[RMDB]
RNA sequence: GGGAACGACUCGAGUAGAGUCGAAAAGAUAUGGACCCUAAGGAGCAUCGAUCUAUAUAAGUCUCGGAAACGAGUCACUAUAGGGAGCUCUAUGGGUCCUAAGUCAAAAGCCUAGUUCGCUAGGCAACCUUACAUGUCCCUUCGGGGACAUGUAAGGAAAAGAAACAACAACAACAAC
Reactivity to 2A3 in 0.01 (KOAc 150mM, MgCl2 10mM, bicine 150mM(pH8.5), 24C), signal-to-noise 2, nucleotides 027 to 126: g010a010u020a000u030g000g000a010c010c020c030u030a180a210g060g000a000g010c000a050u300c080g040a030u040c020u000a000u030a020u010a210a240g050u010c000u000c020g010g000a010a030a020c000g010a000g020u020c070a040c220u030a010u010a030g000g010g020a020g020c010u000c000u010a050u010g010g030g020u020c000c030u000a000a000g000u000c020a000a050a110a000g000c000c010u000a010g010u080u070c300g040c140u000a000g010g010c000a010a020
Reactivity to DMS in 0.01 (KOAc 150mM, MgCl2 10mM, bicine 150mM(pH8.5), 24C), signal-to-noise 2, nucleotides 027 to 126: g000a010u000a160u020g000g010a040c000c000c000u000a250a220g020g000a040g020c010a290u000c180g020a020u050c000u000a000u000a050u000a170a120g000u010c000u010c000g010g000a010a030a050c000g000a010g010u000c070a050c300u000a010u000a000g020g010g000a010g020c000u000c000u000a220u000g000g020g010u000c000c000u000a010a060g010u000c010a060a140a070a110g020c000c000u010a000g000u000u010c140g010c010u010a020g000g010c020a000a020
An RNA of 177 nucleotides, treated with 2A3 and DMS and read out base by base. Reactivities are rounded to 0.1 and cut off at 0 and 3. The reactions ran in a buffer of 150 mM KOAc, 10 mM MgCl2 and 150 mM bicine (pH 8.5), at 24 C. For 2A3, 2,597 sequencing reads were counted. 2A3 adducts were read by reverse transcription with SuperScript II with manganese. Source: RMDB library TTRDEL, as collected in RNAgym. For DMS, 1,020 sequencing reads were counted.